[RMDB]
RNA sequence: GGGAACGACUCGAGUAGAGUCGAAAAGAGGUUUAUCGAGGUUUUCGGCGGAUGCCUCCCGGCUGGAGCGAUGACAGCCGCAAGUCCUCUCUUAAAACAAAGGGGUGACCCUUUGGACAAAGGGGAGUAGUCUAUGCAAAUUCGUUUGCAUAGACUAAAAAGAAACAACAACAACAAC
Reactivity to 2A3 in 0.01 (KOAc 150mM, MgCl2 10mM, bicine 150mM(pH8.5), 24C), signal-to-noise 9, nucleotides 027 to 126: g060a020g040g050u080u120u110a130u160c040g010a070g040g050u050u040u120u130c080g070g000c040g070g010a020u070g010c000c000u020c000c010c010g010g000c010u020g010g020a100g060c080g060a050u110g070a040c010a000g010c010c010g000c030a040a040g080u020c020c000u000c000u000c010u030u110a050a080a020a020c000a000a000a000g000g000g000g040u090g060a090c000c000c000u000u010u000g010g000a020c080a020a090a010g000g000g000g000a010g020
Reactivity to DMS in 0.01 (KOAc 150mM, MgCl2 10mM, bicine 150mM(pH8.5), 24C), signal-to-noise 9, nucleotides 027 to 126: g010a040g000g010u010u000u020a050u020c040g000a070g010g010u010u010u010u010c040g010g010c070g010g000a060u010g010c010c010u000c010c100c020g000g000c010u000g000g000a130g020c140g010a100u020g010a110c020a030g000c010c000g020c200a070a090g010u010c070c000u000c010u010c040u000u010a090a080a090a100c020a000a010a020g000g000g000g000u050g000a220c000c000c000u000u000u000g000g000a080c180a040a110a080g000g000g000g010a070g000
Structure probing data (2A3 and DMS) for a 177-nucleotide construct. It was measured as part of the RMDB libraries RFM100 and RFMREP. As a SHAPE reagent, 2A3 marks flexible, mostly unpaired nucleotides at the ribose 2'-OH.